RNA sequence: GGGAACGACUCGAGUAGAGUCGAAAACAUUACGAAUUCAGUCGCAAAUUGUGGAAUUAGCUACUCUACGAUUUAGUGAGCGUUAGUAACGUUGUAAUAUAAUAUAGUCUUUGGAAGGAUUAUAUUGGAGCCGCGGACAAGUUCGCUUGUCCGCGAACAACAUGCAUUCCUUCGGGAAUGCAUGUUGAAAAGAAACAACAACAACAAC
Reactivity to 2A3 in 0.01 (KOAc 150mM, MgCl2 10mM, bicine 150mM(pH8.5), 24C), signal-to-noise 3, nucleotides 027 to 156: c010a050u140u230a050c060g090a090a110u180u120c040a090g100u020c020g000c020a000a010a010u010u010g010u010g010g020a010a010u050u020a050g000c030u070a030c000u000c000u010a020c000g020a010u010u010u070a060g000u030g040a080g070c020g020u050u090a060g040u080a100a050c040g010u000u010g010u040a090a110u110a070u030a100a050u010a010u000a000g020u000c030u050u060u140g130g040a110a060g020g000a000u010u000a000u010a000u000u010g040g030a070g100c100c000g000c010g030g000a000c000a000a000g000u020u050c150g020c150u000u000g000u000c010c000g000c000g000a000a000
Reactivity to DMS in 0.01 (KOAc 150mM, MgCl2 10mM, bicine 150mM(pH8.5), 24C), signal-to-noise 1, nucleotides 027 to 156: c000a100u010u030a000c030g010a020a120u000u000c030a190g020u000c020g040c000a050a040a030u000u000g040u000g000g000a040a070u000u000a200g040c220u030a090c040u000c010u010a030c010g020a040u010u000u000a100g030u010g000a030g030c100g020u000u000a070g000u000a010a040c020g010u000u010g010u000a060a130u000a080u000a050a020u000a020u000a040g010u000c010u010u010u030g030g030a260a300g000g000a040u000u000a010u010a030u000u020g000g010a150g000c140c040g020c000g040g000a020c000a000a020g000u010u040c300g010c030u000u010g020u010c000c000g050c010g000a000a050

This 207-nucleotide RNA was probed chemically with 2A3 and DMS. The 2A3 profile rests on 2,112 reads. For DMS, 2,271 sequencing reads were counted. 2A3 adducts were read by reverse transcription with SuperScript II with manganese. Conditions: 150 mM KOAc, 10 mM MgCl2 and 150 mM bicine (pH 8.5), 24 C. In probing experiments dimethyl sulfate is read out at A N1 and C N3, which are open when not base-paired. Source: RMDB library M2RFPK, as collected in RNAgym. Reactivities are rounded to 0.1 and cut off at 0 and 3.